[RMDB]
RNA sequence: GGGAACGACUCGAGUAGAGUCGAAAAGCUUCGUCGUGAGACGAAGCACUUGCCGUUCGCGGCAAGAGCACGUCGUGAGACGUGCAAGGAUAACUACGGUUAUCCAACUCUGGCUUCGGCCAGAGAAGGCCUUCUUCGGAAGGCCAGUUAUUGCGUGAGCAAUAACACGAUAUCGUGAGAUAUCGAGUUACGUACGUGAGUACGUAACACGUUUGGUCGAAUGCUACUAGAGCAGCCUGACCAAACUAGUAUUAGUAAAUAAAGGUAGGUUCAGCUUCGGCUGAACCAAAAGAAACAACAACAACAAC
Reactivity to DMS in 0.01 (KOAc 150mM, MgCl2 10mM, bicine 150mM(pH8.5), 24C), signal-to-noise 3, nucleotides 027 to 266: g000c000u000u000c000g000u000c000g000u030g000a280g010a010c000g000a000a010g010c010a070c000u010u000g000c000c000g010u000u010c180g000c000g000g040c010a020a000g010a270g020c030a010c040g020u000c000g010u010g000a240g000a040c000g000u000g000c020a070a060g030g000a000u000a000a010c010u010a140c150g030g000u000u000a000u010c000c010a180a160c000u000c010u000g000g000c020u000u010c250g000g000c000c000a000g010a000g000a140a110g010g000c010c000u000u000c000u000u000c180g000g000a020a010g020g020c000c000a010g000u000u000a000u000u010g010c000g000u010g010a110g010c000a000a000u010a000a010c000a250c040g000a030u000a000u000c010g010u040g000a180g000a010u000a000u000c010g020a240g010u010u000a000c000g020u000a010c000g000u020g020a150g000u020a000c000g010u000a000a000c000a070c170g000u000u000u000g000g000u000c000g010a090a060u000g010c000u000a130c220u030a150g010a020g020c000a010g010c160c030u010g000a020c020c020a000a000a010c000u010a080g020u010a110u020u000a100g000u010a080a130a130u030a050a130a040g000g010u000a060
Reactivity to 2A3 in 0.01 (KOAc 150mM, MgCl2 10mM, bicine 150mM(pH8.5), 24C), signal-to-noise 5, nucleotides 027 to 266: g010c000u000u010c000g000u010c010g030u060g120a120g000a010c000g000a000a000g020c000a000c000u000u000g010c000c000g030u040u080c300g040c010g100g000c000a000a000g010a010g010c000a000c000g010u010c010g030u050g110a100g000a020c000g000u000g000c000a010a050g010g000a000u000a000a000c000u020a040c230g070g000u000u000a000u000c010c000a020a080c000u000c000u010g000g010c000u060u080c250g160g000c000c000a010g000a000g000a020a040g000g010c010c000u000u000c010u020u040c110g120g010a000a000g010g000c000c000a000g000u000u000a010u010u020g020c030g010u080g050a060g010c000a000a000u010a010a010c060a000c050g000a000u000a000u000c030g020u050g130a090g000a030u000a000u000c000g010a020g010u010u000a000c000g000u000a000c010g050u050g100a070g010u020a000c000g000u010a000a000c020a000c030g000u000u000u010g010g000u010c030g040a110a060u020g070c010u050a150c080u170a080g110a020g270c030a010g030c010c070u070g000a000c000c000a000a000a000c010u020a010g020u030a100u300u070a050g090u070a060a150a200u300a150a180a080g200g150u240a050
The record gives the reactivity of an RNA of 307 nucleotides to DMS and 2A3. The RNA was probed in 150 mM KOAc, 10 mM MgCl2 and 150 mM bicine (pH 8.5) at 24 C. Values cover nucleotides 27 to 266. For 2A3, 8,190 sequencing reads were counted.